[RMDB]
RNA sequence: GGGAACGACUCGAGUAGAGUCGAAAAUUCAUUCGUUAAAGAAUGGUUCGCCGGCCGAGAGUUGCGAGAACGGGCAACUUUCUUUGCAGUUCAGCAAUCUGGGAACAAAAUUCGCUAAGGAAUUAACCAGUGGCAUACCAUUCGUGGUAUGCCACUGAAAAGAAACAACAACAACAAC
Reactivity to DMS in 0.01 (KOAc 150mM, MgCl2 10mM, bicine 150mM(pH8.5), 24C), signal-to-noise 2, nucleotides 027 to 126: u010u000c030a040u000u020c030g000u000u040a040a190a100g000a000a020u000g000g000u010u010c040g000c000c000g000g010c110c000g010a040g000a020g000u000u030g000c000g040a100g080a060a060c020g050g040g020c020a020a020c300u000u000u040c050u000u000u010g020c010a270g010u000u030c060a160g000c070a070a070u000c030u010g030g000g000a090a000c130a110a040a010a020u010u010c040g000c180u040a060a190g060g000a030a010u030u050a120a220c120
Reactivity to 2A3 in 0.01 (KOAc 150mM, MgCl2 10mM, bicine 150mM(pH8.5), 24C), signal-to-noise 3, nucleotides 027 to 126: u050u040c010a040u000u040c030g130u110u210a120a070a020g000a020a050u020g010g040u050u020c130g070c080c010g020g020c030c050g090a050g000a010g020u050u020g030c010g020a230g070a190a070c090g140g240g000c000a010a010c000u110u150u050c000u030u020u100g000c010a010g000u030u030c020a020g010c060a020a000u040c000u020g000g040g000a010a000c050a000a160a030a040u030u060c060g000c080u130a080a050g120g020a060a080u090u030a100a010c000

Chemical mapping of a 177-nucleotide RNA with DMS and 2A3. The DMS profile rests on 1,650 reads. The RNA was probed in 150 mM KOAc, 10 mM MgCl2 and 150 mM bicine (pH 8.5) at 24 C.